[RMDB]
RNA sequence: GGGAACGACUCGAGUAGAGUCGAAAAGAUAUGGAUAACAUACUCGCGAUAAGCUGUCAUGUCGGAAACGACAUGCAGCUUUUGACGCGAGUGUUAUCCUAAGUCAAAAGACGUGUUCGCACGUCAAGUGAGGUGAAUAGUUCGCUAUUCACCUCACAAAAGAAACAACAACAACAAC
Reactivity to 2A3 in 0.01 (KOAc 150mM, MgCl2 10mM, bicine 150mM(pH8.5), 24C), signal-to-noise 2, nucleotides 027 to 126: g020a010u080a030u150g000g000a000u020a000a020c010a020u240a100c020u020c000g000c030g060a110u020a160a020g010c050u070g300u300c040a010u000g000u000c000g000g060a070a040a070c000g020a020c000a010u000g000c000a000g000c000u020u020u010u020g050a010c020g000c000g000a000g000u000g000u000u000a000u000c000c000u010a110a020g040u020c030a050a030a090a140g010a010c010g000u020g070u080u140c300g030c110a000c010g000u000c030a010a050
Reactivity to DMS in 0.01 (KOAc 150mM, MgCl2 10mM, bicine 150mM(pH8.5), 24C), signal-to-noise 2, nucleotides 027 to 126: g000a010u000a300u000g000g020a000u000a030a000c010a090u000a090c020u000c010g010c010g010a200u000a020a020g000c000u000g020u050c020a000u010g010u000c000g010g030a130a070a150c000g020a010c000a000u000g010c030a000g000c000u000u000u000u000g020a210c040g030c000g030a010g030u000g010u000u000a030u000c010c000u010a050a100g020u020c010a100a100a120a160g010a020c000g040u000g020u010u020c210g020c000a010c000g010u000c010a040a080